[RMDB]
RNA sequence: GGGAACGACUCGAGUAGAGUCGAAAACUGAACUUGGAGUUAAACUGGCAGCCAACGAGCCCCAACAAUCCUAAUGUGUAUGUCCUCAUAGCAUGGGGGUUUACAGUUGCAUGCAUGGUCAUGCCCAAUGCCAACCAUAGUUCGCUAUGGUUGGCAUAAAAGAAACAACAACAACAAC
Reactivity to 2A3 in 0.01 (KOAc 150mM, MgCl2 10mM, bicine 150mM(pH8.5), 24C), signal-to-noise 1, nucleotides 027 to 126: c010u020g030a050a010c050u110u130g030g000a110g060u050u050a230a100a100c060u010g070g020c030a070g000c010c000a030a040c020g000a020g040c030c020c000c020a060a020c020a040a060u000c000c020u100a180a170u120g010u000g000u070a010u000g040u000c000c020u030c030a050u060a040g000c040a070u060g010g000g000g000g000u030u000u040a030c020a000g040u000u030g000c030a020u010g020c020a110u200g110g010u160c010a010u020g000c040c000c030a050
Reactivity to DMS in 0.01 (KOAc 150mM, MgCl2 10mM, bicine 150mM(pH8.5), 24C), signal-to-noise 2, nucleotides 027 to 126: c050u000g000a060a100c120u000u030g010g020a140g030u000u000a030a100a120c130u000g000g010c030a040g000c040c070a020a040c050g010a060g010c040c020c000c020a100a100c200a040a050u000c050c050u000a080a030u000g020u000g020u010a030u000g030u000c030c090u000c020a030u000a150g000c040a300u000g000g000g000g010g010u000u000u010a050c040a050g000u010u000g000c030a050u010g000c010a160u000g020g000u000c050a030u000g000c000c110c090a040